[RMDB]
RNA sequence: GGGAACGACUCGAGUAGAGUCGAAAAUCUGGGGAGAAAAGGGAGGAUCGGAUGGGAAGAGUAUAUCCUACGGGAAUCCGUGGUUUCCCCUUAUGUCCAGCCCCUCCCCGGUCCUGGUGAAGGGGGAGUACAAAGGAAGCUUCGGCUUCCUUUGUACAAAAGAAACAACAACAACAAC
Reactivity to DMS in 0.01 (KOAc 150mM, MgCl2 10mM, bicine 150mM(pH8.5), 24C), signal-to-noise 1, nucleotides 027 to 126: u070c050u000g000g010g000g000a060g000a040a080a100a190g000g010g030a300g010g000a030u010c120g020g000a130u020g010g020g000a020a080g000a110g020u000a100u030a050u020c090c000u010a050c060g000g010g010a180a060u010c010c020g040u000g000g000u010u030u010c010c010c030c120u000u010a080u030g000u000c010c020a090g000c050c000c010c010u000c020c000c000c010g010g000u000c020c040u000g000g000u000g010a090a110g010g000g000g000g010a150